[RMDB]
RNA sequence: GGGAACGACUCGAGUAGAGUCGAAAAUGCGCGACCUCGACCUCGUGGUGAGUGUGGCCCACGUGGGCGGCGUGGACCCCGAAGCCUCGCAGAGCACGGUGGAAAUGCGCGAAAGCCUGCUGCGCGAGCGCGUAUCGAGGUUCGCCUCGAUACGCGCAAAAGAAACAACAACAACAAC
Reactivity to 2A3 in 0.01 (KOAc 150mM, MgCl2 10mM, bicine 150mM(pH8.5), 24C), signal-to-noise 1, nucleotides 027 to 126: u100g010c020g000c010g030a070c010c000u030c020g060a050c020c000u050c040g040u060g040g030u050g050a180g020u170g000u180g030g010c050c000c010a030c020g010u040g060g050g000c040g060g010c040g050u020g010g090a040c000c000c000c010g030a040a000g020c010c020u070c060g020c050a000g050a000g060c070a020c080g000g000u110g010g050a060a210a020u180g000c000g000c000g030a060a000a000g050c000c030u000g050c020u040g100c040g000c030g060a020
Reactivity to DMS in 0.01 (KOAc 150mM, MgCl2 10mM, bicine 150mM(pH8.5), 24C), signal-to-noise 1, nucleotides 027 to 126: u010g010c070g000c030g000a070c070c010u000c010g000a110c060c030u000c050g040u010g010g000u000g030a090g080u000g020u020g020g050c000c000c000a060c040g020u030g000g010g020c030g020g000c050g000u000g000g000a110c000c020c100c030g000a150a220g020c080c000u010c020g080c150a030g000a050g040c060a020c150g000g030u060g030g010a080a090a130u000g000c020g030c020g060a070a030a200g000c010c030u000g040c060u000g010c050g030c000g050a070